About this RNA:
The data come from the RNA Mapping Database (RMDB), library OK1LIB. Chemical mapping of a 177-nucleotide RNA with 2A3 and DMS.
[RMDB]
RNA sequence: GGGAACGACUCGAGUAGAGUCGAAAACGGCCUAUCAGCUUGUUGAUGGGGUAAUGGACUACCAAGGCGACGACGGGUAGCUGGCCUGAGAGAAUAACCGGCCACAAUGGGACUGAGAUAAGGCCCAAAUUUUAAUAAAAUUCGUUUUAUUAAAAUUAAAAGAAACAACAACAACAAC
Reactivity to 2A3 in 0.01 (KOAc 150mM, MgCl2 10mM, bicine 150mM(pH8.5), 24C), signal-to-noise 3, nucleotides 027 to 126: c030g050g020c010c010u020a040u040c010a030g060c090u080u110g050u070u020g100a110u070g010g000g010g000u010a040a080u100g000g020a020c050u050a030c040c010a060a040g060g010c030g020a060c010g000a010c030g100g000g000u030a040g030c060u010g060g000c000c030u110g010a140g020a010g050a160a050u120a130a010c010c020g070g000c020c010a030c010a010a050u030g000g000g060a100c000u050g030a040g010a120u150a090a090g040g000c000c000c000a020
Reactivity to DMS in 0.01 (KOAc 150mM, MgCl2 10mM, bicine 150mM(pH8.5), 24C), signal-to-noise 6, nucleotides 027 to 126: c160g000g000c010c020u010a050u020c070a060g010c120u010u010g020u020u000g010a090u010g010g000g010g000u000a050a100u020g020g000a130c050u000a090c070c030a090a100g010g010c060g000a050c060g010a090c060g010g000g000u010a070g000c100u000g010g000c020c010u000g000a140g000a130g020a110a060u040a090a110c060c040g000g010c010c010a040c100a060a100u020g000g010g000a050c020u010g000a130g010a220u040a110a090g010g010c000c000c040a030